The data come from the RNA Mapping Database (RMDB), library M2PK50. An RNA of 177 nucleotides, treated with DMS and 2A3 and read out base by base. In probing experiments dimethyl sulfate is read out at A N1 and C N3, which are open when not base-paired. For DMS, 835 sequencing reads were counted.

[RMDB]
RNA sequence: GGGAACGACUCGAGUAGAGUCGAAAAUCUACUCCCUUCGGGGAGUAGAAAAUAAACUUGACGAAUGCCGGUCAAGAAAAACCGCAUUCUAAGAUUGCCGAAAAAGGAACUCCUUCGGGAGUUCCAAUCAAGUCUUACAGUUCGCUGUAAGACUUGAAAAAGAAACAACAACAACAAC
Reactivity to DMS in 0.01 (KOAc 150mM, MgCl2 10mM, bicine 150mM(pH8.5), 24C), signal-to-noise 1, nucleotides 027 to 126: u000c000u000a000c000u000c000c000c000u010u000c150g010g010g030g010a020g010u000a000g000a010a020a040a020u020a130a100a130c040u020u000g010a170c180g000a010a000u000g000c200c120g000g000u000c070a090a220g020a060a100a080a030a030c000c010g000c000a010u000u000c010u000a100a070g000a100u000u000g000c000c040g040a040a050a060a100a110g000g000a010a000c000u000c000c000u000u010c230g010g000g010a020g000u000u000c000c000a000a030
Reactivity to 2A3 in 0.01 (KOAc 150mM, MgCl2 10mM, bicine 150mM(pH8.5), 24C), signal-to-noise 1, nucleotides 027 to 126: u050c000u000a000c000u020c020c000c000u000u110c250g080g010g040g000a000g000u020a020g000a010a020a020a000u020a010a020a000c020u040u030g090a030c060g010a020a000u010g130c180c150g130g020u070c100a200a300g170a220a150a020a000a000c000c000g030c000a010u020u000c020u000a000a040g040a060u030u050g070c010c000g220a090a090a020a070a070g040g020a000a000c000u020c010c010u070u100c270g070g000g010a010g000u000u020c000c000a000a000
Conditions: 150 mM KOAc, 10 mM MgCl2 and 150 mM bicine (pH 8.5), 24 C. For 2A3 the reverse transcriptase was SuperScript II with manganese.